RNA sequence: GGGAACGACUCGAGUAGAGUCGAAAAGCUCAGGUCGAGCACCAUCGGAUUUGUUCCGAGGCUGAAACGCCGGACGUGCUCGCUGAUCUGCUCGACAUUGGCGGCGUCGAUCUCGCCUCGGAUGGUCAUAUGACCAGCGAUUCGUCGCUGGUCAUAUAAAAGAAACAACAACAACAAC
Reactivity to DMS in 0.01 (KOAc 150mM, MgCl2 10mM, bicine 150mM(pH8.5), 24C), signal-to-noise 2, nucleotides 027 to 126: g010c040u000c010a100g040g010u000c060g010a010g000c040a190c070c120a130u010c060g000g020a100u000u000u010g020u000u000c020c000g020a040g000g000c010u010g010a150a120a060c080g000c000c000g000g010a120c090g000u000g000c110u000c100g000c100u000g000a060u010c150u010g000c100u010c030g010a040c020a030u010u010g010g010c030g000g000c050g010u000c060g000a180u020c090u000c060g000c000c010u000c000g010g000a020u010g000g000u010c130
Reactivity to 2A3 in 0.01 (KOAc 150mM, MgCl2 10mM, bicine 150mM(pH8.5), 24C), signal-to-noise 2, nucleotides 027 to 126: g000c000u020c010a060g100g240u200c040g010a000g030c020a040c010c010a100u180c060g070g040a080u080u110u300g180u190u010c000c020g000a020g030g050c020u080g010a020a130a000c050g000c000c000g020g040a070c050g020u020g040c030u000c030g000c020u030g010a120u100c040u140g080c060u030c010g010a030c020a080u080u230g090g150c000g000g050c000g010u040c010g030a080u050c070u020c050g040c000c000u020c000g010g040a040u040g000g020u080c030
The record gives the reactivity of an RNA of 177 nucleotides to DMS and 2A3. Conditions: 150 mM KOAc, 10 mM MgCl2 and 150 mM bicine (pH 8.5), 24 C. It was measured as part of the RMDB library OK2TST.